Source information:
Structure probing data (2A3) for a 177-nucleotide construct. Source: RMDB library OK1LIB, as collected in RNAgym. The 2A3 profile rests on 388 reads.

[RMDB]
RNA sequence: GGGAACGACUCGAGUAGAGUCGAAAAUACAUUAUUGGUGAAGGCAUGGAGGCCAUCUACACUGCUGAGGCAAAGUUACUGUGGCCCAUGUAUCCCGUGUUUGCUUUUGUUAUUUGGCAGUGGAUAUCGGCAUAUACGAGUUCGCUCGUAUAUGCCGAAAAGAAACAACAACAACAAC
Reactivity to 2A3 in 0.01 (KOAc 150mM, MgCl2 10mM, bicine 150mM(pH8.5), 24C), signal-to-noise 1, nucleotides 027 to 126: u140a080c030a010u120u110a170u200u300g140g040u090g110a040a010g000g000c000a000u040g030g010a060g200g020c000c000a000u010c130u120a000c010a000c000u000g020c000u030g010a030g030g030c000a000a070a080g060u110u130a130c140u110g000u080g090g000c000c000c000a000u040g030u060a020u000c010c020c020g020u110g120u030u000u140g040c000u000u080u030u200g100u030u130a180u030u180u000g050g000c000a010g030u000g000g000a020u060a000u170